[RMDB]
Chemical mapping of a 177-nucleotide RNA with DMS. High DMS reactivity at an A or C suggests that its Watson-Crick edge is free. Conditions: 150 mM KOAc, 10 mM MgCl2 and 150 mM bicine (pH 8.5), 24 C.
RNA sequence: GGGAACGACUCGAGUAGAGUCGAAAAAAGAUAUGGACUGUAGUCUCGUGUGGGUCUUGUAAUUCUGCUUAUCGGAAACGAUAAGGCAGGAUACAGGGCCCACACGGUGCCUACAGUCCUAAGUCAAUCGGAAGUUAAAGUUCGCUUUAACUUCCGAAAAAGAAACAACAACAACAAC
Reactivity to DMS in 0.01 (KOAc 150mM, MgCl2 10mM, bicine 150mM(pH8.5), 24C), signal-to-noise 2, nucleotides 027 to 126: a130a100g010a020u000a300u010g000g000a010c010u000g010u000a010g010u010c000u000c000g020u000g010u010g000g020g010u000c000u000u000g000u000a050a130u000u010c000u000g000c000u000u000a010u010c000g000g000a150a110a210c010g010a010u000a000a050g000g020c010a000g010g000a000u000a010c000a010g030g000g020c000c000c000a000c000a000c000g000g000u000g020c070c000u000a000c010a000g000u000c000c010u000a010a050g000u000c040a170a180